RNA sequence: GGGAACGACUCGAGUAGAGUCGAAAACUUGUUCUAACCCCCUGCCCCAGCUCACAACUCUCUCUCCCUCUUGAUGUGAGCAGCAAACCCACUUUCAGAGCUGUGGAGAUUGGCCCAGACCAGGAUCCAUAACGUAAAACUUCGGUUUUACGUUAUGAAAAGAAACAACAACAACAAC
Reactivity to 2A3 in 0.01 (KOAc 150mM, MgCl2 10mM, bicine 150mM(pH8.5), 24C), signal-to-noise 2, nucleotides 027 to 126: c020u050u120g060u180u020c040u080a150a220c010c000c010c010c020u010g030c000c000c020c020a010g020c000u000c000a040c010a000a290c020u040c010u010c000u000c010u020c060c010c000u030c000u040u030g020a030u050g010u000g000a020g000c000a000g010c010a020a020a060c000c020c000a040c030u020u080u050c040a050g000a020g050c010u040g010u040g070g000a040g010a020u030u100g020g010c000c010c060a010g020a030c000c010a000g060g000a010u060c020
Reactivity to DMS in 0.01 (KOAc 150mM, MgCl2 10mM, bicine 150mM(pH8.5), 24C), signal-to-noise 9, nucleotides 027 to 126: c090u000u010g010u000u010c050u010a130a260c050c020c020c030c030u000g010c020c010c020c030a100g010c030u000c040a040c060a070a120c080u000c030u000c060u000c040u000c020c020c020u000c050u010u000g010a090u010g010u000g000a050g000c030a080g010c100a030a080a110c050c010c010a090c090u000u000u000c100a090g010a080g020c070u000g020u010g010g000a070g010a110u010u000g010g010c010c030c030a090g010a110c060c040a070g010g000a130u000c080
Chemical mapping of a 177-nucleotide RNA with 2A3 and DMS. Conditions: 150 mM KOAc, 10 mM MgCl2 and 150 mM bicine (pH 8.5), 24 C. In probing experiments dimethyl sulfate is read out at A N1 and C N3, which are open when not base-paired. For 2A3, 3,678 sequencing reads were counted.